[RMDB]
RNA sequence: GGGAACGACUCGAGUAGAGUCGAAAAAACAGGGCAGGAGGUCGGCCCCAAUUGCCUCAGGCCCAGCCACUCCGGGCCGCGAUCAGCCCGGGCUUUCCCUACUUUGGGGCCCAAUGCUGUCGCGAAGAUCUCUAACGUUAUUCGUAACGUUAGAGAUAAAAGAAACAACAACAACAAC
Reactivity to DMS in 0.01 (KOAc 150mM, MgCl2 10mM, bicine 150mM(pH8.5), 24C), signal-to-noise 9, nucleotides 027 to 126: a060a060c160a110g020g000g010c010a020g000g000a040g010g010u000c210g000g010c030c010c020c020a110a060u020u020g010c010c000u000c020a040g000g010c000c000c010a110g010c070c050a070c130u020c100c030g000g000g010c020c030g000c050g000a040u030c060a050g010c000c300c210g000g000g000c030u010u030u010c010c010c030u020a120c240u010u010u000g000g010g010g000c000c010c080a080a070u030g010c010u000g000u000c020g010c010g000a100a070g000
Reactivity to 2A3 in 0.01 (KOAc 150mM, MgCl2 10mM, bicine 150mM(pH8.5), 24C), signal-to-noise 9, nucleotides 027 to 126: a000a010c090a070g000g000g000c020a020g020g030a010g020g030u160c110g110g020c000c010c000c010a060a120u180u190g010c000c000u010c010a010g010g030c010c000c000a010g040c030c020a070c040u050c030c010g020g010g000c020c010g060c030g030a090u190c060a010g000c000c030c020g000g020g000c000u040u100u040c010c000c000u060a140c070u120u150u150g010g000g000g020c010c000c000a050a030u140g000c020u030g010u040c010g000c010g060a050a010g040